An RNA of 207 nucleotides, treated with 2A3 and DMS and read out base by base. Conditions: 150 mM KOAc, 10 mM MgCl2 and 150 mM bicine (pH 8.5), 24 C. For DMS, 4,650 sequencing reads were counted. For DMS the reverse transcriptase was MarathonRT. The data come from the RNA Mapping Database (RMDB), library OK3TST. For 2A3, 1,857 sequencing reads were counted.
RNA sequence: GGGAACGACUCGAGUAGAGUCGAAAAUGAAACAUGUUUACAGUAGGAAGGACUUUCCUCCAGAAAGCACAGUCUGAGUCGAUUCCAAUUUAUUUCCUCCCUGUAACUGUAAGCGAAAGGAGAGGUUCGGCUGCCGCGGCGGAGCGAGGCUGAGCACACACUGUAGCUUUUUCGAAAGCUACAGUGUAAAAGAAACAACAACAACAAC
Reactivity to 2A3 in 0.01 (KOAc 150mM, MgCl2 10mM, bicine 150mM(pH8.5), 24C), signal-to-noise 2, nucleotides 027 to 156: u200g020a010a030a000c050a050u070g040u040u110u090a050c050a030g050u070a030g030g030a070a010g000g010a050c000u080u080u020c040c040u030c040c030a050g060a030a040a000g010c050a010c010a080g010u010c100u150g000a000g000u010c010g130a170u050u000c000c020a030a010u100u180u110a160u030u170u050c000c010u000c010c020c010u040g010u060a090a050c020u020g020u130a060a040g040c040g070a090a050a010g070g050a110g000a010g050g000u020u050c020g010g000c000u070g090c120c030g050c020g030g090c070g050g010a040g030c030g000a000g000g020c010u020g020a020g000c040a030c010
Reactivity to DMS in 0.01 (KOAc 150mM, MgCl2 10mM, bicine 150mM(pH8.5), 24C), signal-to-noise 2, nucleotides 027 to 156: u000g010a160a060a070c080a080u020g000u000u000u000a040c030a010g000u000a090g010g020a030a020g010g020a100c090u000u000u000c020c040u020c110c070a140g010a040a030a060g020c050a090c040a090g020u010c090u000g030a100g040u000c030g000a190u000u000c030c050a080a150u010u010u000a100u010u010u010c010c010u000c010c020c000u000g020u010a090a000c010u000g010u000a040a040g030c030g010a070a100a110g020g020a040g020a080g000g000u000u000c020g000g010c000u000g000c060c040g010c050g040g010c070g010g000a190g030c020g040a150g000g020c010u000g010a090g040c040a140c140